[RMDB]
The record gives the reactivity of an RNA of 177 nucleotides to 2A3. 2A3 adducts were read by reverse transcription with SuperScript II with manganese. It was measured as part of the RMDB library OK1LIB.
RNA sequence: GGGAACGACUCGAGUAGAGUCGAAAAUGGUUGCGAAGAUCGCGAGCGGGUAUCGUAGCAGACAUGCUACGAGUGUAGCGGAGCUGCUGUCGCGCCGCCUCGUCUCGAUGUCUGCGGUCACGAUCUCGGAAAAACUUCGGUUCGCCGAAGUUUUUCCAAAAGAAACAACAACAACAAC
Reactivity to 2A3 in 0.01 (KOAc 150mM, MgCl2 10mM, bicine 150mM(pH8.5), 24C), signal-to-noise 1, nucleotides 027 to 126: u080g000g000u000u130g050c010g090a070a030g080a210u130c050g000c000g000a000g020c030g000g030g010u060a060u120c050g000u040a000g000c050a000g130a130c120a060u110g000c000u000a000c020g020a120g000u260g060u010a080g020c040g030g040a020g030c050u040g030c110u140g240u140c150g000c000g000c000c030g080c000c000u120c050g080u080c000u000c080g200a110u050g020u000c050u060g000c000g010g100u020c020a010c070g000a040u000c000u000c030